Chemical mapping of a 177-nucleotide RNA with 2A3 and DMS. For 2A3, 9,014 sequencing reads were counted. 2A3 adducts were read by reverse transcription with SuperScript II with manganese. The DMS profile rests on 6,050 reads.

[RMDB]
RNA sequence: GGGAACGACUCGAGUAGAGUCGAAAAUCUAUCACCAGCCCUUGUUUACGACACGAAUGGGCUGUUGCAAAUUACGUAUAGCUCUUGCAACAUCGUGUCGAAACGUUCCCAAGCUAUACGCCACAAAUAUUGAAUUCAGUUUCGACUGAAUUCAAUAAAAAGAAACAACAACAACAAC
Reactivity to 2A3 in 0.01 (KOAc 150mM, MgCl2 10mM, bicine 150mM(pH8.5), 24C), signal-to-noise 5, nucleotides 027 to 126: u020c010u040a120u130c030a020c090c020a020g040c010c000c010u040u080g080u070u190u080a050c020g000a000c020a010c010g060a090a110u210g050g070g000c050u010g000u000u000g000c010a000a040a110u210u080a070c020g000u010a000u010a010g010c020u020c030u180u030g030c000a020a010c000a050u030c010g010u000g000u010c020g010a080a050a010c020g000u000u000c000c000c000a000a010g000c000u000a010u020a020c000g020c040c020a130c020a020a120a010
Reactivity to DMS in 0.01 (KOAc 150mM, MgCl2 10mM, bicine 150mM(pH8.5), 24C), signal-to-noise 5, nucleotides 027 to 126: u010c050u010a100u000c080a110c060c040a050g010c010c010c030u010u010g010u010u010u000a110c020g010a010c000a010c010g010a040a090u020g020g010g010c150u000g000u000u000g000c030a020a040a180u000u010a090c030g010u000a000u000a010g010c010u000c200u000u000g000c020a020a030c020a040u000c000g020u000g000u000c010g000a030a050a210c040g020u000u000c000c000c000a140a040g000c000u000a010u000a020c010g010c150c140a080c150a060a060a090

Reactivities are rounded to 0.1 and cut off at 0 and 3. The RNA was probed in 150 mM KOAc, 10 mM MgCl2 and 150 mM bicine (pH 8.5) at 24 C.